An RNA of 177 nucleotides, treated with DMS and 2A3 and read out base by base. For 2A3 the reverse transcriptase was SuperScript II with manganese. The 2A3 profile rests on 2,096 reads. DMS adducts were read by reverse transcription with MarathonRT.
RNA sequence: GGGAACGACUCGAGUAGAGUCGAAAAAUACAGUACGAAAGUACAAAGAAGCAAUCAAACCGAGCAGUGAAAUGAUGGCUUCAGUCCAAAAUGGGCAAACACUGCAGACGGAGCCAAUGGCAAAUAAGAUCUUUACAAGGUUCGCCUUGUAAAGAUCAAAAGAAACAACAACAACAAC
Reactivity to DMS in 0.01 (KOAc 150mM, MgCl2 10mM, bicine 150mM(pH8.5), 24C), signal-to-noise 2, nucleotides 027 to 126: a100u030a050c130a160g010u000a000c000g020a140a070a200g000u000a000c010a050a040a130g010a040a060g000c020a100a010u010c020a070a100a090c080c050g020a110g000c030a020g020u000g000a070a060a040u010g010a050u000g000g030c010u000u000c020a070g020u000c060c020a070a080a060a020u020g010g010g000c060a090a040a190c010a010c020u000g000c040a100g010a150c030g030g000a110g010c030c060a030a070u000g050g010c070a050a040a040u010a060a080
Reactivity to 2A3 in 0.01 (KOAc 150mM, MgCl2 10mM, bicine 150mM(pH8.5), 24C), signal-to-noise 2, nucleotides 027 to 126: a000u170a030c040a040g000u010a010c020g040a130a020a000g000u020a010c020a010a040a000g050a040a010g000c040a000a060u060c030a030a020a120c020c000g010a010g040c030a000g040u010g070a050a070a190u080g040a020u040g050g000c000u000u030c040a020g030u060c000c000a100a170a010a240u170g000g000g000c000a000a010a030c020a000c020u000g000c000a010g060a020c030g000g000a000g010c020c010a080a100u100g020g030c040a120a050a020u080a040a060